Description: The record gives the reactivity of an RNA of 207 nucleotides to DMS and 2A3. The RNA was probed in 150 mM KOAc, 10 mM MgCl2 and 150 mM bicine (pH 8.5) at 24 C. Reactivities are given for positions 27 through 156.

[RMDB]
RNA sequence: GGGAACGACUCGAGUAGAGUCGAAAAGGCUGUUGCCGGAGCCGAUACCGGAAUACGAGACCUAAUGUGCGGUCGAAUGCACUGAAGUACGAAAGUACGAAGAGGUCAUACCGAGGACCGAGACUCGAUAUGCUCGCUAGAUGGAGCUUUACAUCAACGAUAGUAUACGUUUCGACGUAUACUAUCGAAAAGAAACAACAACAACAAC
Reactivity to DMS in 0.01 (KOAc 150mM, MgCl2 10mM, bicine 150mM(pH8.5), 24C), signal-to-noise 4, nucleotides 027 to 156: g030g020c010u000g040u010u000g020c000c030g010g000a090g050c020c050g020a150u010a070c020c030g020g010a100a140u000a080c080g010a200g010a080c030c030u030a090a160u000g010u000g010c000g030g010u000c130g000a100a180u020g010c010a060c020u000g020a150a230g010u000a030c000g010a180a120a220g010u000a040c000g010a110a100g010a080g000g010u000c010a090u010a060c020c000g000a080g030g000a270c090c130g010a180g020a140c040u000c010g010a100u000a040u010g020c050u000c000g000c090u000a130g020a130u000g000g000a080g010c030u000u000u000a070c080a140u000c020a030a250
Reactivity to 2A3 in 0.01 (KOAc 150mM, MgCl2 10mM, bicine 150mM(pH8.5), 24C), signal-to-noise 6, nucleotides 027 to 156: g000g000c030u050g050u200u120g050c010c000g000g000a000g020c040c120g060a030u080a120c000c000g000g060a050a030u150a080c100g040a030g020a120c010c010u100a100a070u120g000u020g040c010g010g010u090c080g070a030a030u100g000c010a000c020u080g050a090a010g000u000a000c010g020a140a020a010g000u010a000c010g010a030a020g110a030g030g000u030c010a010u060a040c020c020g020a040g000g050a030c000c070g080a040g050a090c010u010c040g040a050u030a040u140g020c010u010c030g030c060u060a060g010a100u060g030g000a010g030c000u040u060u030a070c050a030u040c030a080a080